[RMDB]
RNA sequence: GGGAACGACUCGAGUAGAGUCGAAAACGCCAUCUGCAAAUCAUCUUUGAUAUCAAUGACCAUUUCCUCAAACUGGUGCAGGAACAGUAUCCGGACGAACCCGAUUUGUUGCCACGGGUAUCGAUUACUCGGUUCAUAUGUUCGCAUAUGAACCGAGAAAAGAAACAACAACAACAAC
Reactivity to DMS in 0.01 (KOAc 150mM, MgCl2 10mM, bicine 150mM(pH8.5), 24C), signal-to-noise 2, nucleotides 027 to 126: c120g020c090c020a030u000c070u000g010c060a080a110a040u010c100a030u000c130u000u000u000g010a040u000a070u010c060a000a090u000g000a080c010c030a050u010u000u000c020c010u000c100a020a050a130c060u000g040g000u000g000c090a080g000g000a100a070c050a040g000u000a100u000c030c020g030g000a150c060g040a050a090c020c020c020g000a070u000u000u000g010u010u020g060c030c110a240c060g000g020g000u000a050u000c040g020a190u000u000a050